[RMDB]
RNA sequence: GGGAACGACUCGAGUAGAGUCGAAAAGCCGAUGAAUUGCCGAGAACCCUGGCUCGAAAUCGUCGACGCAUCGACGACGGUCCUGCCAUGAGACCGUAACGAGGACAUGUCGCCUCGAAUGGCGUCGUAUAACAUGAGUGGUUCGCCACUCAUGUAAGUUGGUUGAAAUGUUCGCAUUUCAACCAACAAAAGAAACAACAACAACAAC
Reactivity to 2A3 in 0.01 (KOAc 150mM, MgCl2 10mM, bicine 150mM(pH8.5), 24C), signal-to-noise 5, nucleotides 027 to 156: g050c040c030g030a040u150g100a050a230u160u130g030c050c010g030a010g020a110a070c010c020c030u030g030g000c020u030c070g060a080a070a070u020c030g030u010c010g010a050c090g010c140a150u050c020g000a010c010g000a000c000g000g000u010c010c000u040g020c010c000a020u020g010a010g000a030c000c020g010u070a000a000c020g000a000g000g010a010c050a120u240g030u150c100g050c010c000u000c000g020a010a010u020g000g020c000g040u060c030g000u040a140u040a230a010c000a000u000g000a000g010u010g020g010u010u030c060g030c050c000a000c000u000c000a010u000g000u000a000a010
Reactivity to DMS in 0.01 (KOAc 150mM, MgCl2 10mM, bicine 150mM(pH8.5), 24C), signal-to-noise 2, nucleotides 027 to 156: g040c040c010g010a080u010g010a080a080u000u020g020c040c030g010a120g010a040a160c030c050c020u000g000g020c000u000c010g000a020a070a090u000c000g030u000c020g000a040c100g010c090a150u000c020g030a020c010g000a040c000g030g010u000c000c000u030g030c000c150a130u000g000a110g000a040c030c020g050u000a010a070c040g000a060g020g010a090c050a080u010g020u000c060g010c010c000u000c000g050a080a070u000g010g030c030g030u010c030g000u000a150u010a090a070c020a010u000g000a010g030u010g020g030u000u020c280g030c010c000a020c010u000c000a000u000g000u000a010a110